Structure probing data (DMS and 2A3) for a 177-nucleotide construct.
The DMS profile rests on 3,382 reads.
The 2A3 profile rests on 1,860 reads.
Reactivities are rounded to 0.1 and cut off at 0 and 3.
DMS adducts were read by reverse transcription with MarathonRT.
The reactions ran in a buffer of 150 mM KOAc, 10 mM MgCl2 and 150 mM bicine (pH 8.5), at 24 C.
2A3 adducts were read by reverse transcription with SuperScript II with manganese.
RNA sequence: GGGAACGACUCGAGUAGAGUCGAAAACAGGUAGUGAACUCGGCGGUCGUGAAGGACGACCGUUCGGGCGGCGUUCAGGUGUCAACGGUGAUCGGCGAUGACGAGAUCGGCGAGCAUCCCGUAUCUCGUUGACCUUGACGUUCGCGUCAAGGUCAACAAAAGAAACAACAACAACAAC
Reactivity to DMS in 0.01 (KOAc 150mM, MgCl2 10mM, bicine 150mM(pH8.5), 24C), signal-to-noise 3, nucleotides 027 to 126: c070a130g010g000u000a080g020u000g000a070a110c030u000c020g010g000c000g000g010u000c000g000u000g000a180a130g000g000a050c010g010a010c000c010g010u000u000c040g020g010g010c070g010g000c020g010u010u000c040a010g020g010u000g000u000c020a020a020c030g030g010u020g010a020u000c020g010g010c170g030a040u000g000a060c040g010a140g010a110u000c100g000g010c030g010a170g010c030a050u010c010c000c000g000u010a030u000c000u000c030
Reactivity to 2A3 in 0.01 (KOAc 150mM, MgCl2 10mM, bicine 150mM(pH8.5), 24C), signal-to-noise 2, nucleotides 027 to 126: c040a020g070g150u170a040g080u060g080a040a030c000u000c020g000g020c000g040g000u010c000g000u020g140a200a080g140g090a030c000g000a000c000c010g000u090u070c030g000g000g000c000g000g000c010g040u100u080c050a020g060g020u100g040u060c030a020a020c020g040g050u160g030a030u020c020g040g020c080g070a020u030g020a020c010g010a010g000a150u130c030g110g000c030g090a120g040c010a000u010c000c000c020g040u050a070u020c030u000c020